[RMDB]
RNA sequence: GGGAACGACUCGAGUAGAGUCGAAAAGUGGUGGAUGUGGUGGUGGUGACAACCGCUGCAAAGAGAAUUCCAGUCAGGACCCUCCUCCAUCUCCCCAGGUCUUGAGAGCCAGGCUUGCCACCCAUCCCAGAUCAAGAGUCUUCGGACUCUUGAUCUGAAAAGAAACAACAACAACAAC
Reactivity to DMS in 0.01 (KOAc 150mM, MgCl2 10mM, bicine 150mM(pH8.5), 24C), signal-to-noise 1, nucleotides 027 to 126: g000u020g030g010u010g010g000a060u010g020u010g020g010u010g030g060u000g020g000u020g000a110c090a100a160c030c030g030c020u000g020c070a060a050a150g000a090g010a140a100u000u000c060c010a120g040u000c030a080g010g010a090c060c000c040u000c010c010u020c010c020a130u000c080u000c020c020c010c040a080g020g000u000c010u000u000g010a110g000a100g000c010c040a070g030g010c030u000u000g000c000c000a010c000c000c000a100u000c000c010